[RMDB]
RNA sequence: GGGAACGACUCGAGUAGAGUCGAAAAGCAUCUGAGAAUAGAACCACAAUCAAGUCAUACUACUAGUCACUAUACAAUAAUCAACAAUUUUAGUCAACUGAUUACCAAGAUGUUAUCAUAGGUCCGACGUAUCUGGGAUGUUCGCAUCCCAGAUACGAAAAGAAACAACAACAACAAC
Reactivity to 2A3 in 0.01 (KOAc 150mM, MgCl2 10mM, bicine 150mM(pH8.5), 24C), signal-to-noise 5, nucleotides 027 to 126: g020c020a020u000c020u090g020a030g100a170a110u120a150g070a090a060c030c030a030c040a090a110u040c040a120a070g090u050c000a040u050a190c020u030a020c010u000a050g120u060c050a010c120u090a090u120a230c100a200a110u220a090a100u240c050a030a060c060a090a110u020u090u030u090a040g020u050c000a050a030c070u040g020a030u010u020a020c080c010a040a020g010a020u030g020u050u030a110u110c030a070u050a100g040g080u010c040c020g000a070
Reactivity to DMS in 0.01 (KOAc 150mM, MgCl2 10mM, bicine 150mM(pH8.5), 24C), signal-to-noise 2, nucleotides 027 to 126: g070c100a050u000c000u000g000a120g000a160a050u140a050g000a090a130c010c030a120c250a080a100u000c010a020a230g030u000c110a100u000a010c010u010a000c040u000a020g000u080c070a100c050u000a100u080a170c170a050a080u000a070a080u050c150a000a080c300a030a000u040u000u050u000a090g030u020c120a110a110c030u000g000a030u000u000a070c140c090a050a050g000a030u000g000u000u030a030u000c160a090u020a060g000g000u000c000c030g000a140
Source information
This 177-nucleotide RNA was probed chemically with 2A3 and DMS. Values are in units of 0.01, from 0 to 300, in steps of 10. The DMS profile rests on 1,475 reads. The data come from the RNA Mapping Database (RMDB), library OK1LIB. For 2A3 the reverse transcriptase was SuperScript II with manganese. The RNA was probed in 150 mM KOAc, 10 mM MgCl2 and 150 mM bicine (pH 8.5) at 24 C.